[RMDB]
RNA sequence: GGGAACGACUCGAGUAGAGUCGAAAAGGGGUCGAGACGAUAAGUUGUUACAAGCUAUGAAGUAUACUGAAGCCUCCACGGUAUAUGGAGCUUGAACAACUUUUGACGUCUCGACGGAGGCACCCAAAACGUACCCAGCCUUCGGGCUGGGUACGAAGGUGAAUAAGGUCUUCGGACCUUAUUCACCAAAAGAAACAACAACAACAAC
Reactivity to 2A3 in 0.01 (KOAc 150mM, MgCl2 10mM, bicine 150mM(pH8.5), 24C), signal-to-noise 2, nucleotides 027 to 156: g030g000g060g010u000c000g000a020g010a010c010g110a160u130a300a000g000u000u000g000u040u020a300c010a000a000g000c000u060a290u300g000a000a000g000u020a000u000a000c000u010g020a040a000g000c010c000u000c000c000a010c010g000g000u010a000u010a010u020g020g000a000g000c000u020u010g000a000a000c000a000a000c000u010u000u030u150g210a100c020g010u010c010u000c000g000a020c020g000g010a010g010g000c000a050c000c000c000a040a170a000a010c010g000u000a000c000c000c010a010g020c010c060u090u100c300g070g010g000c010u000g000g000g000u010a000c000g000a000a020